[RMDB]
RNA sequence: GGGAACGACUCGAGUAGAGUCGAAAAAGACCGCCUCUACGGAGGUGGUCAAGUCACGUAGCUAGUACCAGGUUGCAAUACUAGAGCGUUAGUCCUGGGGCGUACGGUGGCAGUACGCUGCCACCGAUAAAACUUGAAUACUUCGGUAUUCAAGUAAACUGAUUAGGUAGUUCGCUACCUAAUCAGUAAAAGAAACAACAACAACAAC
Reactivity to 2A3 in 0.01 (KOAc 150mM, MgCl2 10mM, bicine 150mM(pH8.5), 24C), signal-to-noise 2, nucleotides 027 to 156: a020g000a000c000c000g000c010c000u030c010u040a080c300g090g000a000g000g010u000g010g000u000c000a000a010g030u000c010a000c040g010u010a020g070c010u000a000g010u030a170c020c000a010g030g000u010u000g000c000a000a000u000a010c000u010a010g000a010g020c080g120u130u180a000g020u050c000c010u010g000g000g010g050c150g080u190a050c040g020g000u000g010g000c000a000g000u040a030c300g000c060u000g000c000c000a010c000c000g010a000u020a000a040a000a000c000u000u000g000a000a000u000a010c010u010u070c190g060g000u000a000u000u000c000a000a000g000u000a020a040
Reactivity to DMS in 0.01 (KOAc 150mM, MgCl2 10mM, bicine 150mM(pH8.5), 24C), signal-to-noise 2, nucleotides 027 to 156: a120g010a000c010c000g030c010c000u000c010u000a130c300g080g050a020g040g040u020g010g000u010c010a010a060g000u010c110a170c070g000u010a080g040c010u000a020g000u000a020c040c020a050g000g000u030u000g000c030a100a050u000a020c020u000a020g020a300g000c000g020u020u010a060g010u000c000c020u000g000g000g000g030c060g010u000a010c020g000g010u000g050g090c000a040g030u000a080c210g020c000u010g010c000c010a020c010c010g000a010u000a010a050a070a060c000u000u010g000a000a010u000a010c000u000u000c300g050g000u000a010u000u000c000a000a010g020u000a010a050